[RMDB]
RNA sequence: GGGAACGACUCGAGUAGAGUCGAAAAGAACAGGAUCGCCGCCAAGUUCGCUGUAGACGUAACGGCUAAAACUCAUACAGCUCGCUCCAAGCACCCUGCCACUCGGGCGGCGCGGAGUUAACUCAGUAGAGCUGGCUAAGCAUGUAGAACCGAUAGCGUAAAACAUCUAGUUCGCUAGAUGUUUUACAAAAGAAACAACAACAACAAC
Reactivity to DMS in 0.01 (KOAc 150mM, MgCl2 10mM, bicine 150mM(pH8.5), 24C), signal-to-noise 3, nucleotides 027 to 156: g010a110a140c040a100g020g000a100u010c070g030c020c020g070c010c030a200a300g000u040u010c040g020c010u000g030u000a120g010a020c020g000u010a140a100c030g030g000c000u010a090a060a130a080c040u000c060a090u000a060c010a030g000c030u010c060g010c020u000c000c030a050a200g010c030a060c010c000c010u000g050c000c060a070c090u000c070g020g030g030c020g040g030c060g040c130g010g000a040g020u000u000a050a040c100u010c090a070g000u000a060g010a050g020c120u020g010g000c040u000a000a100g000c020a110u010g020u010a090g000a080a090c040c030g010a220u010a090g020c180
Reactivity to 2A3 in 0.01 (KOAc 150mM, MgCl2 10mM, bicine 150mM(pH8.5), 24C), signal-to-noise 4, nucleotides 027 to 156: g040a050a020c040a050g070g020a060u130c040g000c000c000g000c020c000a090a010g000u050u050c070g000c050u050g020u070a020g010a030c020g020u040a030a000c020g010g020c010u020a010a010a030a040c120u120c080a020u020a050c010a000g020c020u020c040g010c000u000c010c000a030a020g010c000a020c000c010c000u020g020c030c010a040c020u040c030g040g000g000c080g080g010c010g000c030g000g000a000g000u010u030a040a020c060u070c150a030g030u040a000g020a010g000c090u010g000g000c010u040a030a040g020c010a020u110g040u140a060g040a120a020c050c040g070a100u100a050g080c050